Chemical mapping of a 207-nucleotide RNA with 2A3 and DMS.
[RMDB]
RNA sequence: GGGAACGACUCGAGUAGAGUCGAAAAUCGCGUUGGCUGACUAAUUCAAGGAAUUAGCGUGCCUUCAUGCUAAGGGUUUGAUAUCUGCUAAAACCCGGUGCAUUCAUCAAUGCAGGUUAAGCCAAAGAAACGGCUCACGAAUUCGUUCGUGAGCCAACGUAGUUACCUUCUUCGGAAGGUAACUACGAAAAGAAACAACAACAACAAC
Reactivity to 2A3 in 0.01 (KOAc 150mM, MgCl2 10mM, bicine 150mM(pH8.5), 24C), signal-to-noise 3, nucleotides 027 to 156: u050c040g010c050g060u030u010g010g000c040u020g060a300c020u090a020a020u030u010c170a250a180g120g070a090a030u010u010a010g010c090g030u040g020c010c000u010u000c040a050u060g000c000u030a030a020g010g010g000u000u010u010g040a030u050a020u040c020u010g030c020u020a040a030a000a010c000c000c000g000g020u000g020c040a100u080u180c040a040u110c040a130a120u170g000c010a000g030g000u060u190a100a040g010c060c010a080a040a050g130a050a140a040c160g000g000c010u000c000a000c000g000a010a030u080u110c220g020u090u010c000g000u080g060a000g000c000c000a000a000
Reactivity to DMS in 0.01 (KOAc 150mM, MgCl2 10mM, bicine 150mM(pH8.5), 24C), signal-to-noise 2, nucleotides 027 to 156: u000c080g020c050g030u000u010g010g050c000u000g000a100c000u000a000a030u010u000c030a180a160g070g020a060a040u000u000a000g010c030g050u000g010c010c030u000u000c050a090u000g050c050u000a260a110g010g010g020u000u000u010g020a170u010a080u000c010u000g000c060u000a140a020a020a040c020c000c000g030g030u000g080c020a070u000u010c070a080u000c120a090a240u000g000c030a030g010g020u000u000a100a070g040c050c010a000a120a160g000a070a100a130c140g000g010c000u000c000a000c020g020a030a080u000u000c300g010u010u010c000g000u000g000a010g040c000c000a000a000

Values cover nucleotides 27 to 156. The reactions ran in a buffer of 150 mM KOAc, 10 mM MgCl2 and 150 mM bicine (pH 8.5), at 24 C.